Structure probing data (DMS and 2A3) for a 177-nucleotide construct. The RNA was probed in 150 mM KOAc, 10 mM MgCl2 and 150 mM bicine (pH 8.5) at 24 C. For 2A3, 1,210 sequencing reads were counted. 2A3 adducts were read by reverse transcription with SuperScript II with manganese. The DMS profile rests on 1,708 reads. It was measured as part of the RMDB library M2PK50.
[RMDB]
RNA sequence: GGGAACGACUCGAGUAGAGUCGAAAAGGCGGGGCGUUCGCGCCCCGCCAAAGUCGGUAUGCGUAAUAAUUAAUCGUACGCAUCGAUUAAUUUCCGACAUUAAAAGCCGAUCAUUCGUGAUCGGCAAUAAUAAUCGUACUUUCGAGUACGAUUAUUAAAAAGAAACAACAACAACAAC
Reactivity to DMS in 0.01 (KOAc 150mM, MgCl2 10mM, bicine 150mM(pH8.5), 24C), signal-to-noise 2, nucleotides 027 to 126: g010g090c020g160g010g130g190c040g190u000u010c140g010c080g170c020c020c020c030g150c000c030a020a000a030g000u000c010g010g010u000a020u020g010c040g010u000a070a040u010a060a160u030u010a050a080u010c190g020u000a040c030g000c050a030u010c020g000a020u010u010a020a160u000u000u000c000c010g010a130c130a120u000u000a030a030a170a110g010c010c000g010a010u000c000a050u020u020c180g030u010g030a020u000c000g020g000c000a000a000
Reactivity to 2A3 in 0.01 (KOAc 150mM, MgCl2 10mM, bicine 150mM(pH8.5), 24C), signal-to-noise 1, nucleotides 027 to 126: g040g000c070g010g060g030g010c060g040u060u090c150g100c000g090c080c030c040c000g000c020c000a000a000a000g000u000c010g000g060u120a010u090g000c010g020u010a030a060u090a110a100u190u230a080a110u190c070g000u020a020c040g000c030a030u000c000g000a010u020u130a080a100u020u070u000c010c000g050a030c040a040u090u290a150a200a050a000g000c040c000g020a010u000c000a000u080u100c170g050u020g000a010u000c000g000g020c020a010a000